[RMDB]
RNA sequence: GGGAACGACUCGAGUAGAGUCGAAAACGUCUUUUAUAUUAACUAUAUAGCCAGUGAACGACGAUAAAGGCAAGUGAUGACAAGCAUAUUGAGGUAAUAAUGAUUGUCAUAAGCGGUUUAAGUGCACCACUUUACACGCUUUCGAGCGUGUAAAGUGAAAAGAAACAACAACAACAAC
Reactivity to 2A3 in 0.01 (KOAc 150mM, MgCl2 10mM, bicine 150mM(pH8.5), 24C), signal-to-noise 3, nucleotides 027 to 126: c030g100u070c000u050u180u090u060a090u040a160u150u150a050a040c070u010a080u020a000u040a190g060c010c050a090g080u050g240a140a010c150g110a030c040g020a010u120a170a040a000g010g030c100a140a060g080u030g120a050u010g000a030c030a010a000g000c000a000u030a030u090u070g180a100g240g140u300a090a000u120a040a010u060g130a090u040u010g030u000c000a020u000a020a110g080c050g010g130u000u170u080a080a010g020u090g070c000a010c050
Reactivity to DMS in 0.01 (KOAc 150mM, MgCl2 10mM, bicine 150mM(pH8.5), 24C), signal-to-noise 2, nucleotides 027 to 126: c020g000u010c050u000u000u020u020a010u010a040u000u070a150a140c030u050a010u000a070u000a120g000c170c050a140g010u010g010a040a120c090g000a090c090g020a170u060a050a050a050g000g000c070a170a150g010u000g000a100u000g020a000c000a010a000g000c000a010u000a020u010u030g010a160g030g020u010a120a030u010a060a020u000g000a000u000u000g030u000c000a010u030a100a150g000c040g000g000u000u010u030a000a110g040u000g010c130a180c100